[RMDB]
RNA sequence: GGGAACGACUCGAGUAGAGUCGAAAACGCGAAGAUGCCGACGAUCCACGCCGCCGUUUUGCCAAGAGUACGGGUGAGCGCCAUGCCAGAUUCCGUCGUUGUUCUUCCUGAAUCGGCCGUGCCGCGACGCAUAAUCCCUGUUCGCAGGGAUUAUGCGAAAAGAAACAACAACAACAAC
Reactivity to 2A3 in 0.01 (KOAc 150mM, MgCl2 10mM, bicine 150mM(pH8.5), 24C), signal-to-noise 1, nucleotides 027 to 126: c040g000c060g020a030a000g020a050u110g040c020c020g030a020c040g010a030u010c020c010a010c040g010c010c050g030c000c020g040u050u040u150u090g070c080c000a090a010g070a030g060u100a030c070g040g000g030u070g010a070g000c050g000c000c070a130u150g070c030c010a030g010a060u080u020c000c030g030u010c010g050u030u060g000u100u000c010u010u000c010c020u000g060a070a100u100c060g030g000c020c040g030u070g010c010c010g010c040g000a050
Reactivity to DMS in 0.01 (KOAc 150mM, MgCl2 10mM, bicine 150mM(pH8.5), 24C), signal-to-noise 2, nucleotides 027 to 126: c060g030c070g010a060a110g010a090u010g030c020c030g000a090c050g020a090u010c050c060a090c080g040c040c060g000c080c010g000u010u000u000u020g020c060c070a090a140g010a120g000u000a030c080g030g000g030u020g020a140g020c060g010c050c070a070u020g000c020c040a090g010a090u010u010c070c020g000u020c060g010u000u000g010u010u000c060u020u000c020c020u000g000a050a090u000c060g000g020c030c090g010u000g000c060c020g000c060g000a140